[RMDB]
RNA sequence: GGGAACGACUCGAGUAGAGUCGAAAAAUGAGUCGAAGCAAUAACAAGAAUAUUUCUAGUGGAACAUCUUUCACAAUCCCUGGAGAGAUGGUUCGCUAAUAGACCGAGGGAUAAGGAAUUCGACUCAACUUGAACGAUUAUUCGUAAUCGUUCAAGUAAAAGAAACAACAACAACAAC
Reactivity to DMS in 0.01 (KOAc 150mM, MgCl2 10mM, bicine 150mM(pH8.5), 24C), signal-to-noise 7, nucleotides 027 to 126: a130u000g010a010g020u000c000g010a030a040g020c110a120a090u010a090a110c140a100a100g000a140a140u000a040u000u010u000c060u000a010g020u000g000g010a010a010c010a010u000c000u000u000u000c010a060c070a070a100u010c030c040c020u010g010g000a020g010a010g000a010u000g000g000u000u000c010g010c020u010a040a080u010a070g010a100c080c050g000a120g000g000g010a040u010a050a090g010g010a120a130u000u000c010g010a010c000u000c000a060
Reactivity to 2A3 in 0.01 (KOAc 150mM, MgCl2 10mM, bicine 150mM(pH8.5), 24C), signal-to-noise 7, nucleotides 027 to 126: a000u040g000a000g000u000c010g020a020a000g060c070a050a140u140a140a070c060a110a050g180a230a060u070a090u100u150u040c040u030a010g000u010g040g000a010a000c000a010u000c000u010u020u000c070a100c020a230a120u070c040c010c010u030g020g000a010g000a000g000a010u010g030g000u000u000c000g000c010u020a040a070u080a100g080a040c040c040g040a060g020g050g020a050u030a070a070g080g020a070a080u030u000c000g000a000c000u010c000a000